[RMDB]
RNA sequence: GGGAACGACUCGAGUAGAGUCGAAAAGUUAGGAGAGCCUAGCGGUCUAUUGACUUUCUUUAUAGUGUUUUACGGAUUAGAAGAGUUAUUUUUCUCAUUUUCUUUCUGUUUCCUUGAACUACUUGAUGGAAACUUAUUAAUUCGUUAAUAAGUUUCCAAAAGAAACAACAACAACAAC
Reactivity to 2A3 in 0.01 (KOAc 150mM, MgCl2 10mM, bicine 150mM(pH8.5), 24C), signal-to-noise 9, nucleotides 027 to 126: g010u020u010a020g020g040a110g010a030g180c000c010u020a020g010c040g040g030u010c020u060a150u040u160g050a050c000u050u060u020c000u010u130u030a130u070a080g030u030g020u030u020u010u060a040c060g010g010a020u030u050a040g030a090a020g030a010g060u100u080a190u110u140u030u110u040c050u030c050a070u080u080u090u020c020u020u090u020c020u020g120u020u030u010c010c000u010u060g030a040a020c020u090a030c010u140u060g030a050u100
Reactivity to DMS in 0.01 (KOAc 150mM, MgCl2 10mM, bicine 150mM(pH8.5), 24C), signal-to-noise 4, nucleotides 027 to 126: g010u010u000a030g000g000a130g000a100g010c020c010u000a040g030c110g030g010u010c030u010a050u020u000g010a060c060u000u000u000c030u000u000u000a090u020a100g010u000g020u000u010u000u030a050c060g000g010a030u000u000a040g000a040a040g000a060g010u010u010a070u010u010u010u020u000c040u030c050a120u000u000u010u000c010u010u010u010c020u000g000u010u000u000c020c010u000u000g020a040a060c100u010a050c040u000u000g010a210u010